[RMDB]
RNA sequence: GGGAACGACUCGAGUAGAGUCGAAAAGAUAUGGAAUGUGUAGCUAGUGCCCAGUCGGAAACGACUGGAAGCACUUGGACCUACCAUUCCUAAGUCAAACUGAACUGGUGUUCGCACCAGUUCAGAAGAGACAAUUAUGCUUCGGCAUAAUUGUCUCAAAAGAAACAACAACAACAAC
Reactivity to DMS in 0.01 (KOAc 150mM, MgCl2 10mM, bicine 150mM(pH8.5), 24C), signal-to-noise 1, nucleotides 027 to 126: g000a020u000a020u040g000g000a000a020u000g040u000g010u010a000g000c000u000a010g040u000g010c010c000c000a000g020u000c010g010g000a000a010a010c000g010a000c000u000g010g000a070a070g020c010a000c000u000u000g000g040a010c300c000u000a000c020c010a000u000u000c000c000u000a000a060g000u000c000a130a090a300c000u000g010a000a000c000u000g000g050u000g020u000u020c300g000c000a000c000c000a020g020u000u000c000a000g000a080a180
Reactivity to 2A3 in 0.01 (KOAc 150mM, MgCl2 10mM, bicine 150mM(pH8.5), 24C), signal-to-noise 1, nucleotides 027 to 126: g000a010u010a010u030g020g030a020a000u000g140u050g010u100a010g000c020u000a000g000u000g010c000c000c000a010g000u000c000g000g020a030a010a000c000g010a000c010u000g010g040a040a020g000c000a000c000u050u300g000g000a000c000c000u010a010c010c000a000u010u000c000c000u010a010a010g010u040c000a100a080a080c000u000g000a000a000c000u010g000g000u010g050u150u130c300g080c070a000c030c000a000g010u000u000c000a000g000a040a050
Structure probing data (DMS and 2A3) for a 177-nucleotide construct. The 2A3 profile rests on 3,499 reads. Source: RMDB library TTRDES, as collected in RNAgym. Conditions: 150 mM KOAc, 10 mM MgCl2 and 150 mM bicine (pH 8.5), 24 C. DMS adducts were read by reverse transcription with MarathonRT.